Structure probing data (2A3 and DMS) for a 177-nucleotide construct. The RNA was probed in 150 mM KOAc, 10 mM MgCl2 and 150 mM bicine (pH 8.5) at 24 C.
RNA sequence: GGGAACGACUCGAGUAGAGUCGAAAAAGAAGCGGUAUUGUCGGGGAAGCGAGCACACUUGAUUUGGGAGUGUUGGAAGCUUCUGAAGGUUCUGGGCUGAACGAAAAGUCAAUAAGAAAAGCAAUCGAUCUGUCGAAUAGUUCGCUAUUCGACAGAUAAAAGAAACAACAACAACAAC
Reactivity to 2A3 in 0.01 (KOAc 150mM, MgCl2 10mM, bicine 150mM(pH8.5), 24C), signal-to-noise 1, nucleotides 027 to 126: a000g070a010a010g000c050g020g040u060a050u050u080g060u030c000g070g000g020g000a040a010g020c020g000a010g030c000a010c000a010c000u100u060g090a130u280u130u150g230g060g030a020g000u040g000u010u050g050g040a050a020g000c000u000u000c010u020g040a040a000g060g000u020u090c050u050g000g050g060c030u040g000a040a020c030g090a070a060a030a030g020u030c000a000a070u160a200a030g100a060a080a020a010g080c050a030a060u150c080g050
Reactivity to DMS in 0.01 (KOAc 150mM, MgCl2 10mM, bicine 150mM(pH8.5), 24C), signal-to-noise 3, nucleotides 027 to 126: a080g000a070a070g010c050g000g000u000a040u000u010g020u010c040g000g000g010g010a060a060g000c030g010a250g010c050a040c050a030c030u000u010g020a220u000u000u010g020g000g000a060g000u000g010u000u010g010g040a110a300g010c030u010u000c020u010g000a060a120g010g010u000u000c040u010g010g010g040c070u010g000a040a080c070g000a070a040a040a110g000u000c040a050a110u010a040a080g010a040a070a060a130g020c100a050a110u010c100g010